[RMDB]
RNA sequence: GGGAACGACUCGAGUAGAGUCGAAAAUCACAAAACCCAACCACAAGUUCGGUUGGUGCGUCUGUCCGGGUCGGGGCGCGUAAGCCGCCCAACCUCAUCCCGUUCCCUCGCGGAACAGGGAGUGUUAGCUACAACGACUAUUCGUAGUCGUUGUAGCAAAAGAAACAACAACAACAAC
Reactivity to 2A3 in 0.01 (KOAc 150mM, MgCl2 10mM, bicine 150mM(pH8.5), 24C), signal-to-noise 4, nucleotides 027 to 126: u110c010a020c040a060a080a010a040c010c010c000a000a000c020c000a050c040a190a130g130u160u070c040g050g000u000u000g040g020u050g010c000g040u040c050u100g150u000c010c000g020g020g010u010c130g010g020g000g000c020g000c000g100u160a030a120g060c090c020g000c000c000c000a010a010c000c010u070c010a070u010c020c000c000g010u000u000c000c020c000u140c140g080c220g000g000a020a050c030a180g060g010g010a020g000u080g030u040u110a020
Reactivity to DMS in 0.01 (KOAc 150mM, MgCl2 10mM, bicine 150mM(pH8.5), 24C), signal-to-noise 3, nucleotides 027 to 126: u030c070a120c230a050a020a100a100c130c010c000a030a000c020c020a130c070a160a100g020u020u000c140g030g000u000u000g000g010u010g000c050g000u010c060u010g020u020c020c000g010g000g000u020c050g010g000g000g050c020g030c020g010u020a130a110g010c290c030g020c000c010c000a140a060c020c020u000c080a110u010c010c000c020g000u000u000c000c000c040u040c300g030c160g000g000a040a010c030a040g030g000g010a060g010u010g000u010u030a080

Overview
The data come from the RNA Mapping Database (RMDB), libraries RFM100 and RFMREP. This 177-nucleotide RNA was probed chemically with 2A3 and DMS. Values cover nucleotides 27 to 126. For 2A3 the reverse transcriptase was SuperScript II with manganese.